RNA sequence: GGGAACGACUCGAGUAGAGUCGAAAAGCUCAGUGUGUGUCGCCCCGUCGUCUAGUGCUGGUUCUAGGGCUCGGGCGUCAGCAUCCAGGUCUGACGGGACGGGCAGUAUCUCGCCAUCAACGAUAAAAUGAUAUAAAGUGUUCGCACUUUAUAUCAUAAAAGAAACAACAACAACAAC
Reactivity to 2A3 in 0.01 (KOAc 150mM, MgCl2 10mM, bicine 150mM(pH8.5), 24C), signal-to-noise 5, nucleotides 027 to 126: g020c020u020c070a070g010u040g000u020g000u010g050u140c000g000c010c000c000c000g020u040c020g010u000c030u040a030g030u010g090c030u040g040g040u100u020c030u060a070g060g050g020c020u030c020g040g000g020c010g010u010c000a000g000c010a030u080c060c050a030g000g100u050c050u100g010a010c000g000g010g040a010c010g000g010g000c010a000g000u040a050u090c050u030c040g040c030c010a110u090c050a050a040c020g010a010u120a110a180a030
Reactivity to DMS in 0.01 (KOAc 150mM, MgCl2 10mM, bicine 150mM(pH8.5), 24C), signal-to-noise 9, nucleotides 027 to 126: g010c030u000c040a090g020u010g020u010g010u000g010u010c020g010c030c010c020c030g020u000c030g010u000c020u000a060g020u000g010c030u000g010g010u000u010c050u000a110g020g000g010c030u000c040g010g010g010c050g010u000c020a020g010c030a060u010c080c120a070g000g010u000c030u010g010a020c020g010g010g010a060c030g010g000g000c030a050g000u010a060u010c040u000c060g000c030c040a080u000c090a050a070c080g000a100u010a040a070a080